[RMDB]
RNA sequence: GGGAACGACUCGAGUAGAGUCGAAAAAGGAGGCGAAAUCUUCCGUUUCAAGUCGGAACCGAUGGAGUCCCCCUUGGGUCCUUCGAAAGCUGAAAGAAGUUGGAAAAAUCGGGCAUCCGGAGAACCUCUAAAGUUAUUUCUUCGGAAAUAACUUUAGAAAAGAAACAACAACAACAAC
Reactivity to DMS in 0.01 (KOAc 150mM, MgCl2 10mM, bicine 150mM(pH8.5), 24C), signal-to-noise 1, nucleotides 027 to 126: a010g010g010a060g010g060c000g000a210a130a030u020c020u000u010c000c010g000u000u020u000c140a130a210g000u000c030g000g010a060a030c170c100g010a000u000g000g010a300g010u020c030c000c010c120c030u010u010g020g000g010u000c030c010u000u000c030g000a020a120a050g030c010u010g000a030a120a080g000a030a080g010u030u000g020g000a050a030a130a070a120u020c150g000g020g010c030a090u000c030c020g000g000a120g000a090a070c070c060u020
An RNA of 177 nucleotides, treated with DMS and read out base by base. DMS adducts were read by reverse transcription with MarathonRT.